Chemical mapping of a 207-nucleotide RNA with DMS and 2A3. For 2A3 the reverse transcriptase was SuperScript II with manganese. The DMS profile rests on 1,512 reads.
[RMDB]
RNA sequence: GGGAACGACUCGAGUAGAGUCGAAAAGAUCGGAAACAACAGCAGGUGAGUCCGCCUUAUGUGAAGGAUCGGCUGAAACACGAGGAAAUACUGAGCCAACGCAAGACGGUAGCCGAACAGUAGCAACAAAACGCUUACGUGUUCGCACGUAAGCGAACCAUACUUUGCCGUUCGCGGCAAAGUAUGGAAAAGAAACAACAACAACAAC
Reactivity to DMS in 0.01 (KOAc 150mM, MgCl2 10mM, bicine 150mM(pH8.5), 24C), signal-to-noise 1, nucleotides 027 to 156: g000a090u000c010g030g040a110a080a100c090a060a100c050a060g000c080a080g000g000u000g010a130g020u000c030c090g030c010c020u000u010a060u000g010u000g000a030a110g000g000a180u000c070g010g000c000u000g000a300a160a020c000a050c080g030a160g000g010a060a100a070u000a110c130u000g010a070g040c010c000a060a110c000g000c060a070a050g030a160c000g030g010u000a100g040c000c000g000a020a160c080a070g090u010a000g050c080a080a040c070a020a100a050a140c020g000c000u000u000a030c000g000u000g020u000u000c170g020c090a000c000g000u000a040a000g050c010g000a000a000
Reactivity to 2A3 in 0.01 (KOAc 150mM, MgCl2 10mM, bicine 150mM(pH8.5), 24C), signal-to-noise 3, nucleotides 027 to 156: g020a070u090c040g070g010a060a050a020c020a000a050c020a030g100c000a020g000g040u040g040a030g080u030c020c030g030c020c020u140u110a150u100g080u070g090a090a030g080g030a050u070c020g020g030c030u070g000a060a070a010c090a020c090g040a030g030g080a030a030a020u160a100c070u060g030a000g020c030c010a050a020c040g020c090a060a060g030a020c000g070g020u040a010g050c000c020g020a000a010c010a020g050u090a000g010c040a020a050c020a060a060a000a010c010g000c000u000u000a000c010g000u000g010u050u040c170g010c070a000c000g010u000a000a000g000c000g000a000a010
For DMS the reverse transcriptase was MarathonRT.